[RMDB]
RNA sequence: GGGAACGACUCGAGUAGAGUCGAAAAGAUAUGGACAAGGAACUACAUGUUAUUUGCCUUUGAUCUCGGAAACGAGGGAGGCAAUUAACAUGCCUUGUCCUAAGUCAAACAGACCUUCGGGUCUGAACCUAGAUUACGGGUUCGCCCGUAAUCUAGGAAAAGAAACAACAACAACAAC
Reactivity to 2A3 in 0.01 (KOAc 150mM, MgCl2 10mM, bicine 150mM(pH8.5), 24C), signal-to-noise 2, nucleotides 027 to 126: g020a010u090a030u150g000g000a000c000a000a010g040g000a050a060c120u170a040c300a000u000g000u000u000a020u010u050u010g010c010c000u180u280u110g110a160u070c000u010c010g030g060a110a080a060c020g000a000g000g020g000a000g000g010c000a000a010u000u000a010a010c000a000u000g000c000c000u000u000g000u010c000c000u000a010a010g000u000c000a030a050a130c010a000g000a000c000c000u060u160c300g130g010g000u000c000u030g020a020a010
Reactivity to DMS in 0.01 (KOAc 150mM, MgCl2 10mM, bicine 150mM(pH8.5), 24C), signal-to-noise 2, nucleotides 027 to 126: g010a020u000a300u010g010g010a010c000a010a010g050g020a160a020c020u030a300c030a010u000g000u000u000a000u000u000u000g010c010c000u000u000u010g000a050u000c000u000c000g010g000a140a060a260c000g000a010g020g000g010a010g000g010c000a010a020u000u000a000a010c000a000u000g000c000c000u000u000g020u000c000c000u000a010a070g000u010c050a070a100a240c010a040g000a020c000c020u000u000c170g030g000g000u000c010u000g010a040a120